An RNA of 207 nucleotides, treated with DMS and 2A3 and read out base by base.
Conditions: 150 mM KOAc, 10 mM MgCl2 and 150 mM bicine (pH 8.5), 24 C.

RNA sequence: GGGAACGACUCGAGUAGAGUCGAAAAGCGUACUACUGUCGUUUGACGUAUGUUGUCAGCUCUACGAGGUCCCAAAUAGGACGCAGUAGAGCUUGGAUUUACAUACCGAGACAGUAUCGCAAAGUUGUGCAAACGACUUCGGUCGUUUGCACAACAACGAGAAGGUAAGGUUCGCCUUACCUUCUCGAAAAGAAACAACAACAACAAC
Reactivity to DMS in 0.01 (KOAc 150mM, MgCl2 10mM, bicine 150mM(pH8.5), 24C), signal-to-noise 2, nucleotides 027 to 156: g010c000g040u000a070c110u000a020c010u000g000u000c010g000u000u030u020g000a130c120g030u000a010u010g030u000u010g030u000c000a050g010c000u000c010u000a000c010g000a300g000g000u010c000c010c000a060a100a270u000a060g000g010a020c000g020c030a300g010u000a030g010a020g020c010u000u000g030g000a050u010u000u000a030c010a000u000a010c000c000g020a120g020a030c000a030g010u000a010u020c000g000c010a040a130a110g020u000u000g030u000g000c010a000a040a020c000g000a070c030u000u000c300g060g020u000c000g010u010u000u010g000c000a000c000a000a010c000a090a140
Reactivity to 2A3 in 0.01 (KOAc 150mM, MgCl2 10mM, bicine 150mM(pH8.5), 24C), signal-to-noise 2, nucleotides 027 to 156: g000c000g060u120a140c100u000a000c000u060g000u000c060g100u050u090u250g080a030c020g010u000a010u010g000u000u000g030u010c010a000g000c000u000c000u030a000c010g010a030g000g060u010c000c000c030a230a300a030u300a110g000g000a030c010g000c100a020g000u000a010g000a000g000c000u000u000g000g000a010u000u100u000a000c000a000u010a010c000c000g020a020g000a060c000a010g000u000a000u070c010g010c010a090a070a000g020u020u010g000u010g000c020a030a030a000c010g030a020c000u060u110c300g020g000u020c000g000u000u000u000g000c010a000c000a000a000c000a000a000